[RMDB]
RNA sequence: GGGAACGACUCGAGUAGAGUCGAAAAGACGUAAUCCGCGCAAAUCCACAAGCGCCAACGAUGAGCGUUUCGCUGUAGCCGCUUAAGGCAACAGCCGGGGCCGCCUGAGCCCUGUUACCAAAGACGGGAAACUCGAUGCCAUUCGUGGCAUCGAGAAUAAACAUACCAGGUUCGCCUGGUAUGUUUAAAAAGAAACAACAACAACAAC
Reactivity to 2A3 in 0.01 (KOAc 150mM, MgCl2 10mM, bicine 150mM(pH8.5), 24C), signal-to-noise 4, nucleotides 027 to 156: g020a000c010g010u030a040a020u030c050c020g000c000g000c030a050a120a150u190c140c040a180c060a200a080g000c010g040c040c040a150a040c080g060a060u100g050a060g120c020g010u010u060u110c040g000c000u010g020u070a080g000c010c010g050c200u290u270a150a090g000g000c000a010a010c000a010g000c000c020g010g000g000g000c000c030g020c010c030u040g010a010g000c000c000c000u000g040u050u120a030c010c000a010a020a000g110a030c020g010g000g010a040a040a040c000u000c000g000a000u000g000c000c000a010u070u010c180g080u110g000g000c000a000u000c000g000a000g000a000a000
Reactivity to DMS in 0.01 (KOAc 150mM, MgCl2 10mM, bicine 150mM(pH8.5), 24C), signal-to-noise 2, nucleotides 027 to 156: g000a150c010g010u000a170a090u010c020c070g000c000g020c030a070a050a040u000c020c030a040c040a060a300g000c000g040c010c060a060a090c060g000a100u000g010a180g000c040g020u000u000u000c070g000c000u000g020u000a100g000c020c010g000c190u000u010a120a160g050g000c000a040a030c010a000g020c020c010g000g010g040g050c010c030g000c000c000u000g000a130g020c010c000c010u000g000u000u000a110c050c050a050a090a110g030a100c100g000g010g000a120a120a150c000u000c000g040a000u000g030c000c000a100u000u000c300g040u000g010g020c000a000u000c000g000a000g000a000a050
Structure probing data (2A3 and DMS) for a 207-nucleotide construct. The data come from the RNA Mapping Database (RMDB), library M2RFPK. Values cover nucleotides 27 to 156. For 2A3 the reverse transcriptase was SuperScript II with manganese. The 2A3 profile rests on 2,948 reads. Conditions: 150 mM KOAc, 10 mM MgCl2 and 150 mM bicine (pH 8.5), 24 C.